RNA sequence: GGGAACGACUCGAGUAGAGUCGAAAAGAUAUGGACCCUGCAACAGCAUAGGUAUCGGAAACGAUACUAUGACAUGCAGGUGUCCUAAGUCAAAAGAAAGACGAUCGGUUCGCCGAUCGUCUUUCAACACAAAGCCUAUCUUCGGAUAGGCUUUGUGAAAAGAAACAACAACAACAAC
Reactivity to DMS in 0.01 (KOAc 150mM, MgCl2 10mM, bicine 150mM(pH8.5), 24C), signal-to-noise 2, nucleotides 027 to 126: g000a030u000a260u000g030g000a020c030c000c000u000g000c010a030a140c240a120g000c010a000u000a030g030g020u010a000u010c000g000g000a030a040a110c000g010a000u000a030c000u000a000u000g000a140c070a200u010g000c020a030g010g000u000g020u000c000c000u000a020a060g000u000c030a120a080a120a060g000a010a010a020g000a010c020g010a010u010c010g040g000u000u010c210g020c010c000g010a010u000c000g020u000c000u000u000u000c010a080a180

Notes:
An RNA of 177 nucleotides, treated with DMS and read out base by base. Conditions: 150 mM KOAc, 10 mM MgCl2 and 150 mM bicine (pH 8.5), 24 C. For DMS, 1,429 sequencing reads were counted.